[RMDB]
RNA sequence: GGGAACGACUCGAGUAGAGUCGAAAAGAAAAGAAAGCUAUCGCAGAUCUCGAACAGCACCAAGAGAUCUACUCGAAAGAGUAUGGUCGAAAGACCGAUAGCGGUGCUGUAAAAAGAAAAAGAAAAAGGGUAUGUGUAACUUCGGUUACACAUACCCAAAAGAAACAACAACAACAAC
Reactivity to DMS in 0.01 (KOAc 150mM, MgCl2 10mM, bicine 150mM(pH8.5), 24C), signal-to-noise 1, nucleotides 027 to 126: g000a030a020a150a020g030a060a050a160g060c000u000a000u000c050g000c090a010g000a010u000c000u000c000g000a260a090c050a010g000c000a020c020c030a140a170g020a030g010a050u000c010u000a030c000u010c000g000a090a100a190g000a000g100u000a180u040g000g000u000c000g050a040a020a140g000a000c000c000g000a000u010a010g000c030g010g080u000g070c000u000g000u000a000a080a000a060a110g010a020a030a200a090a160g000a010a040a050a170a130
Reactivity to 2A3 in 0.01 (KOAc 150mM, MgCl2 10mM, bicine 150mM(pH8.5), 24C), signal-to-noise 1, nucleotides 027 to 126: g060a000a080a020a000g100a160a060a000g010c020u010a000u020c090g010c090a010g000a000u000c000u000c010g020a030a000c000a000g070c020a000c000c000a100a000g000a000g000a000u000c000u000a010c000u000c000g030a080a070a040g020a000g040u040a110u100g030g000u000c000g020a000a000a000g000a000c020c000g000a000u050a000g000c010g000g000u000g030c000u000g040u050a010a010a000a000a070g240a020a110a030a000a000g130a000a100a000a030a000
Chemical mapping of a 177-nucleotide RNA with DMS and 2A3. Reactivities are given for positions 27 through 126. The 2A3 profile rests on 1,221 reads. Conditions: 150 mM KOAc, 10 mM MgCl2 and 150 mM bicine (pH 8.5), 24 C. The data come from the RNA Mapping Database (RMDB), library OK1LIB.